[RMDB]
RNA sequence: GGGAACGACUCGAGUAGAGUCGAAAAUUGCAACAAGCAAAGACAAGUCUAUUGACUUCAAAUGGACAUCAUCACAUUGUCAUCUGAUAAUUUUUCCAGCAUCCUUUGCCUCCUCUGUGUUAAAUUAUAAAUUAAUGCUGAUUUAUACAGUUCAGUAUAAAUUAUGGCCUUUCGAGGCCAUAAUUUAAAAAGAAACAACAACAACAAC
Reactivity to DMS in 0.01 (KOAc 150mM, MgCl2 10mM, bicine 150mM(pH8.5), 24C), signal-to-noise 1, nucleotides 027 to 156: u000u000g030c050a110a080c110a130a150g010c030a110a030a140g050a160c050a000a120g040u000c000u000a130u030u000g010a110c060u010u020c060a130a160a120u000g020g020a070c170a080u000c050a130u000c040a020c030a100u000u000g030u000c100a090u010c030u000g030a050u020a000a070u000u030u000u000u000c020c000a100g000c010a050u000c020c030u000u000u010g000c000c000u000c030c030u010c030u000g020u010g000u000u000a040a020a060u000u000a130u000a050a030a050u000u010a050a080u000g000c020u020g000a140u010u000u000a050u000a070c140a120g040u000u000c060a060g020u000a160
Reactivity to 2A3 in 0.01 (KOAc 150mM, MgCl2 10mM, bicine 150mM(pH8.5), 24C), signal-to-noise 1, nucleotides 027 to 156: u020u110g040c000a020a140c070a170a090g040c030a050a000a100g040a010c010a050a050g030u000c000u070a100u100u120g010a040c040u190u070c100a020a020a020u100g010g000a000c010a010u150c030a000u040c000a000c000a250u030u090g010u030c010a080u000c120u070g040a050u080a260a180u070u070u030u110u040c050c000a000g010c000a070u000c050c000u000u000u180g010c000c000u030c030c000u030c000u000g000u000g000u090u020a070a130a000u300u100a230u100a110a140a090u230u180a000a030u080g030c000u000g010a010u030u000u010a140u030a070c010a000g080u040u050c000a010g000u000a010
The record gives the reactivity of an RNA of 207 nucleotides to DMS and 2A3. The reactions ran in a buffer of 150 mM KOAc, 10 mM MgCl2 and 150 mM bicine (pH 8.5), at 24 C. Reactivities are given for positions 27 through 156.